RNA sequence: GGGAACGACUCGAGUAGAGUCGAAAAACAGGGCCAAUAACACAGCAGCAUCCAUUUAAUUUAAUUUUAAUGCAAAACACAUCCCUCAACGGUGUCAUGCGUCCUGCUGGCCCAUUGGCAAAUGACCACCGUCCUGCAGUUUCGACUGCAGGACGGUAAAAGAAACAACAACAACAAC
Reactivity to 2A3 in 0.01 (KOAc 150mM, MgCl2 10mM, bicine 150mM(pH8.5), 24C), signal-to-noise 1, nucleotides 027 to 126: a000c140a080g180g000g000c080c000a000a120u120a170a000c210a000c000a110g060c000a000g010c000a070u020c000c000a000u020u020u040a080a070u050u150u100a140a270u030u000u030u120a170a090u150g020c000a000a000a000a000c160a000c040a070u100c000c000c020u080c020a000a100c090g000g020u020g160u090c040a040u050g040c000g020u050c040c000u000g010c000u020g000g000c010c010c000a000u000u000g000g000c010a040a020a120u060g000a000c000c000

The record gives the reactivity of an RNA of 177 nucleotides to 2A3. 2A3 adducts were read by reverse transcription with SuperScript II with manganese.